[RMDB]
RNA sequence: GGGAACGACUCGAGUAGAGUCGAAAAGAAUGAACCUUGGCUGUCACCUAGUCCAACACUUUCAUUUUGUAGUUGAGGAAAUUGUGGCCUGGAGAGGUUAAAUGAAAGAUGUGAGGUCUUGCAAUUAGUGUCAGAGCUGGGACUAGAACCUUACCAAAGUCGCAAAAUGAUUCGUCAUUUUGCGACUAAAAGAAACAACAACAACAAC
Reactivity to DMS in 0.01 (KOAc 150mM, MgCl2 10mM, bicine 150mM(pH8.5), 24C), signal-to-noise 1, nucleotides 027 to 156: g060a200a210u000g000a050a160c020c020u010u000g030g010c010u020g000u000c030a090c020c000u000a030g000u020c020c000a050a090c050a130c030u000u010u000c030a090u000u000u000u000g060u000a150g000u000u000g020a160g010g020a030a100a100u010u000g050u020g000g000c040c020u010g020g000a280g000a170g010g000u010u000a000a000a110u010g000a050a020a040g020a100u000g010u000g020a160g060g030u000c020u000u000g020c040a070a220u000u000a080g060u000g000u000c020a080g000a100g010c040u030g020g010g010a060c000u000a070g000a060a040c060c000u000u010a160c040c010a040a190
Reactivity to 2A3 in 0.01 (KOAc 150mM, MgCl2 10mM, bicine 150mM(pH8.5), 24C), signal-to-noise 1, nucleotides 027 to 156: g050a030a050u080g010a070a080c000c000u060u040g050g010c000u040g130u080c030a000c050c040u000a020g030u000c000c010a000a020c010a030c030u100u120u070c060a020u040u060u080u210g110u090a110g000u010u120g030a050g050g030a080a060a150u140u160g020u100g030g050c000c060u110g000g050a040g010a020g090g000u150u080a060a060a000u110g040a010a070a000g070a120u040g000u030g080a050g000g050u010c010u010u110g000c010a050a180u110u020a170g030u050g010u010c010a020g000a010g000c010u020g000g000g000a000c000u000a030g030a120a080c000c030u030u070a010c070c000a100a030